[RMDB]
RNA sequence: GGGAACGACUCGAGUAGAGUCGAAAAUGAAACGAAGGGGGGACGGAGAAGGCUAUGUUGGCCGGGCGACGGUUGUCCCGGUUUAAGCGUGUAGGCUGGUUUUCCAGGCAAAUCCGGAGUAAAAAAAGAUAAACUGUAAGUUCGCUUACAGUUUAUCAAAAGAAACAACAACAACAAC
Reactivity to 2A3 in 0.01 (KOAc 150mM, MgCl2 10mM, bicine 150mM(pH8.5), 24C), signal-to-noise 1, nucleotides 027 to 126: u040g000a000a030a010c050g000a100a110g000g000g000g020g000g000a000c000g010g000a030g000a050a000g000g000c020u050a010u150g040u060u070g060g000c000c000g010g000g020c030g010a070c100g090g060u090u130g050u110c000c010c010g000g000u020u060u030a010a010g030c030g010u030g080u080a020g170g000c030u010g000g010u050u050u040u050c010c000a020g090g000c010a060a030a030u040c040c000g040g100a030g000u140a020a160a060a010a000a010a000
Reactivity to DMS in 0.01 (KOAc 150mM, MgCl2 10mM, bicine 150mM(pH8.5), 24C), signal-to-noise 5, nucleotides 027 to 126: u000g000a100a080a100c030g010a170a080g010g010g010g000g000g020a070c040g010g000a050g010a120a100g010g010c040u000a040u010g000u010u010g000g000c010c020g000g000g020c300g010a060c130g010g010u010u000g000u010c010c000c000g000g000u000u010u010a050a070g010c040g010u000g010u000a060g010g000c020u000g000g010u000u000u000u010c010c030a130g000g010c070a040a040a100u000c030c020g000g010a160g010u020a000a000a050a080a030a090a110

The record gives the reactivity of an RNA of 177 nucleotides to 2A3 and DMS. For DMS, 6,171 sequencing reads were counted. Conditions: 150 mM KOAc, 10 mM MgCl2 and 150 mM bicine (pH 8.5), 24 C. DMS (dimethyl sulfate) methylates the pairing face of unpaired adenines and cytosines.